RNA sequence: GGGAACGACUCGAGUAGAGUCGAAAAGCGCAGCGCAGCGGACACCAUCGGAGCGAGGCCGCAGGAUGCGGUGCGCCAUCACAUGCAUUGCUUCCACUUCUACGCAGCUGGAGAGCGGUGAGAGUGGGAGCCUACGGGCAUUCGUGCCCGUAGGCUCAAAAGAAACAACAACAACAAC
Reactivity to 2A3 in 0.01 (KOAc 150mM, MgCl2 10mM, bicine 150mM(pH8.5), 24C), signal-to-noise 2, nucleotides 027 to 126: g000c010g000c000a040g260c020g020c000a000g000c000g000g000a030c020a090c060c050a300u080c060g010g190a080g020c160g100a020g000g050c000c000g050c040a070g000g190a020u020g010c000g050g160u000g020c020g000c010c000a020u100c030a050c000a130u140g050c000a010u040u040g000c040u020u000c000c020a020c000u150u120c000u060a030c090g020c120a070g000c030u050g010g100a230g030a020g170c010g000g000u020g060a130g000a000g000u020g000g010